[RMDB]
RNA sequence: GGGAACGACUCGAGUAGAGUCGAAAACGACGUCCCCACGACGCCGGUCCUCGCGACCAUUCCUCGUGUCGAGCUCGGCUCGGUCGGCACGUGGGACAUCUCGAACAUCGCCGGAUGGCAUCCGACCGCCGAGGACUUCGCGUCCGCGGUCGCCGCGCAAGGUGUAGACGUUCGCGUCUACACCUUGAAAAGAAACAACAACAACAAC
Reactivity to 2A3 in 0.01 (KOAc 150mM, MgCl2 10mM, bicine 150mM(pH8.5), 24C), signal-to-noise 2, nucleotides 027 to 156: c020g080a000c070g020u010c090c010c020c000a100c060g130a010c020g000c000c000g030g040u040c010c020u030c110g070c090g000a040c080c000a060u070u080c030c040u030c030g020u080g030u040c010g010a030g100c080u140c240g130g030c110u050c040g040g050u030c000g000g000c020a000c030g020u060g030g000g000a010c030a050u010c060u080c080g040a170a060c020a300u170c060g050c040c000g100g060a030u110g060g060c010a070u050c040c000g030a040c020c010g030c020c060g060a040g010g000a000c030u060u060c200g000c080g050u000c010c000g000c010g010g060u130c050g000c060c000g080c000g000